[RMDB]
RNA sequence: GGGAACGACUCGAGUAGAGUCGAAAAAAGGCAAGUUCGAAGCUGGAUAGGCUUCGAUGUUGAGGGUGCUCAUGCUUCCCGUAAUGCAUGUGGCACCAAUGUGCCUCUACAAUUAGGAUUUUCAACUGUAGUGAGACCUUCGGGUCUCACAAAAGAAACAACAACAACAAC
Reactivity to 2A3 in 0.01 (KOAc 150mM, MgCl2 10mM, bicine 150mM(pH8.5), 24C), signal-to-noise 3, nucleotides 027 to 129: a000a000g030g030c010a010a030g160u030u000c000g000a000a000g000c020u060g080g080a150u210a150g000g000c000u000u020c000g000a000u000g000u020u060g000a110g060g000g000u030g010c000u000c000a000u000g000c020u080u050c000c000c010g080u210a020a090u120g000c030a000u000g020u130g040g000c010a000c000c000a000a000u050g000u030g000c020c000u020c000u050a090c060a100a080u200u090a060g040g030a090u060u070u050u090c100a110a010c030u070g020u090a060
Reactivity to DMS in 0.01 (KOAc 150mM, MgCl2 10mM, bicine 150mM(pH8.5), 24C), signal-to-noise 2, nucleotides 027 to 129: a020a030g070g010c000a030a050g010u000u030c000g010a000a000g000c010u040g000g080a180u100a130g010g020c010u010u000c030g040a010u070g030u040u000g010a220g030g000g050u040g010c030u020c000a010u000g010c000u010u000c040c070c120g000u010a150a020u000g010c030a010u030g010u050g000g020c000a000c000c030a030a000u030g000u050g000c050c010u030c040u010a010c120a000a120u100u030a130g040g030a090u020u010u080u030c050a040a120c150u020g000u010a080